This 177-nucleotide RNA was probed chemically with 2A3 and DMS.
For 2A3, 2,296 sequencing reads were counted.
For DMS, 2,759 sequencing reads were counted.
Values cover nucleotides 27 to 126.
For 2A3 the reverse transcriptase was SuperScript II with manganese.
For DMS the reverse transcriptase was MarathonRT.

[RMDB]
RNA sequence: GGGAACGACUCGAGUAGAGUCGAAAAAAACUUGGGUAUAGGGGCGAAAGACUAAUCGAACCAUCUAGUAGCUGGUUCCCUCCGAAAUUUCCCUCAGGAUAGCAGCAACUUAUUUACGAUAGUUUUAUCAGUACAUGUAGUUCGCUACAUGUACUGAAAAAGAAACAACAACAACAAC
Reactivity to 2A3 in 0.01 (KOAc 150mM, MgCl2 10mM, bicine 150mM(pH8.5), 24C), signal-to-noise 2, nucleotides 027 to 126: a000a000a000c080u090u070g040g000g000u090a070u060a100g040g000g010g000c030g030a080a020a010g060a040c070u110a040a090u060c030g040a020a010c010c010a020u040c000u000a070g050u050a010g070c020u020g010g010u010u010c010c000c000u000c010c010g050a090a080a040u060u070u000c020c000c000u010c060a000g000g000a030u030a060g060c010a000g010c010a040a040c020u090u100a120u190u240u110a080c070g040a120u040a090g020u040u050u010u020a070
Reactivity to DMS in 0.01 (KOAc 150mM, MgCl2 10mM, bicine 150mM(pH8.5), 24C), signal-to-noise 3, nucleotides 027 to 126: a040a010a030c070u010u000g010g010g010u000a100u010a100g000g000g000g000c050g020a060a050a060g000a110c110u010a100a070u000c050g010a050a050c060c020a040u010c080u010a090g010u010a080g020c070u010g000g000u000u000c000c020c020u010c020c020g010a050a030a110u010u010u000c010c010c010u000c170a170g000g010a030u010a070g010c030a050g010c010a060a030c060u010u000a070u000u000u000a110c100g010a100u000a030g020u010u000u000u000a110